[RMDB]
RNA sequence: GGGAACGACUCGAGUAGAGUCGAAAAGAUUAAGUGGGAGCGUCGCCCUCUCGGUGCAUCGGAUAUUAAUUAGCCAGUGCGUGGCACUACGCAUAUUGAUGUCUACUUUGGCGUAGACUUUGCCAAUUUAAGGAUUGUUGGGCAAUCCAGCCCUAGAGCCCUAAUAUCAUUUCGAUGAUAUUAGGGCAAAAGAAACAACAACAACAAC
Reactivity to 2A3 in 0.01 (KOAc 150mM, MgCl2 10mM, bicine 150mM(pH8.5), 24C), signal-to-noise 1, nucleotides 027 to 156: g070a030u150u210a060a090g060u050g000g020g010a060g000c080g050u040c060g070c000c050c000u030c000u010c020g000g040u060g020c040a040u050c070g060g000a010u000a030u120u230a240a070u160u080a010g010c010c050a030g030u020g070c040g040u100g020g000c020a000c040u050a020c050g000c000a030u050a130u090u170g020a080u110g010u000c000u030a050c050u070u070u090g050g000c040g020u040a000g000a050c000u030u030u030g020c000c010a060a030u130u120u090a140a010g010g010a040u010u090g080u030u050g000g000g000c000a010a020u080c040c010a010g020c020c000c000u050a080g010a000
Reactivity to DMS in 0.01 (KOAc 150mM, MgCl2 10mM, bicine 150mM(pH8.5), 24C), signal-to-noise 2, nucleotides 027 to 156: g010a160u000u010a050a110g070u010g020g000g000a110g000c060g010u010c050g010c010c030c030u000c040u000c060g030g050u000g020c010a120u000c060g050g010a040u000a070u000u000a080a150u000u010a130g010c000c030a050g040u010g020c010g040u010g010g020c020a240c060u000a060c010g020c010a130u010a130u000u000g000a080u000g000u000c100u010a060c050u000u020u000g030g020c030g000u000a050g000a050c060u000u000u060g000c010c020a020a050u010u000u010a080a120g060g030a120u000u000g000u000u000g020g020g030c070a110a090u000c120c080a150g000c000c020c030u010a050g010a270
An RNA of 207 nucleotides, treated with 2A3 and DMS and read out base by base. Source: RMDB library OK3TST, as collected in RNAgym. Values are in units of 0.01, from 0 to 300, in steps of 10.